[RMDB]
RNA sequence: GGGAACGACUCGAGUAGAGUCGAAAAGAAUUGUCCACUAUUGAAUCCUUGAUGAACUUGUAUCAACAGCUAGGAGAGGUUGCACCCUACAUGGUAAUUCUCGAGAACUCAAUUCAGAACAAGUUUAAUACGUUUAAUUAUUCGUAAUUAAACGUAUAAAAGAAACAACAACAACAAC
Reactivity to 2A3 in 0.01 (KOAc 150mM, MgCl2 10mM, bicine 150mM(pH8.5), 24C), signal-to-noise 5, nucleotides 027 to 126: g030a040a060u070u050g030u020c020c010a040c070u060a070u110u100g050a060a030u050c010c010u050u060g020a070u060g010a080a040c020u080u060g030u070a140u090c020a030a060c010a050g030c030u040a030g020g070a070g020a040g080g000u050u080g020c040a070c000c010c020u060a060c020a050u060g010g010u030a030a020u100u000c010u000c010g110a120g010a060a030c010u010c050a020a090u180u050c020a020g030a050a030c010a030a020g010u000u050u070a020
Reactivity to DMS in 0.01 (KOAc 150mM, MgCl2 10mM, bicine 150mM(pH8.5), 24C), signal-to-noise 9, nucleotides 027 to 126: g010a070a080u000u000g010u000c020c030a170c100u000a100u000u000g010a100a100u000c030c020u000u010g010a090u010g010a050a050c120u000u010g010u000a080u010c070a060a070c100a050g010c100u000a060g010g010a130g000a080g010g000u000u010g010c090a110c060c040c060u000a070c100a070u000g010g010u000a030a090u010u000c020u000c030g010a140g010a050a060c050u000c050a030a060u010u000c100a100g010a060a050c070a040a070g000u000u000u010a080
Annotation: The record gives the reactivity of an RNA of 177 nucleotides to 2A3 and DMS. The RNA was probed in 150 mM KOAc, 10 mM MgCl2 and 150 mM bicine (pH 8.5) at 24 C. Values cover nucleotides 27 to 126. The data come from the RNA Mapping Database (RMDB), library OK2TST.